[RMDB]
RNA sequence: GGGAACGACUCGAGUAGAGUCGAAAAAAGGACGUAAGCCGGAGGAGCAAAGGUGAUUAGAGACCCCUGUAGUUCCGGCCGUAAACUAUGCCAACUGGGUGUUACGUAGUGGUACCCACGAGAAAUCACGAAUCUAACGAUUCGUCGUUAGAUUCGUAAAAGAAACAACAACAACAAC
Reactivity to 2A3 in 0.01 (KOAc 150mM, MgCl2 10mM, bicine 150mM(pH8.5), 24C), signal-to-noise 8, nucleotides 027 to 126: a000a000g080g020a040c050g030u110a060a020g000c000c000g010g020a010g040g050a110g040c050a070a090a010g020g000u110g030a140u050u180a080g070a030g020a160c020c010c010c010u030g030u100a070g050u080u000c000c000g000g010c000c000g020u030a000a030a020c040u050a040u180g050c010c010a050a020c050u040g020g030g000u020g050u090u040a100c150g120u110a080g030u040g050g000u030a020c000c040c010a020c040g060a080g080a040a060a030u130c060
Reactivity to DMS in 0.01 (KOAc 150mM, MgCl2 10mM, bicine 150mM(pH8.5), 24C), signal-to-noise 9, nucleotides 027 to 126: a100a040g000g000a050c050g010u010a110a170g010c000c000g000g000a100g000g000a270g000c040a030a080a060g000g020u010g000a130u030u030a140g010a190g000a140c090c040c040c050u010g000u010a150g000u020u010c010c000g010g000c000c010g000u000a090a060a070c080u010a060u020g020c020c010a080a210c250u000g000g000g010u000g000u010u010a040c030g020u020a100g020u000g000g010u000a040c000c000c010a010c150g010a150g000a060a080a090u040c110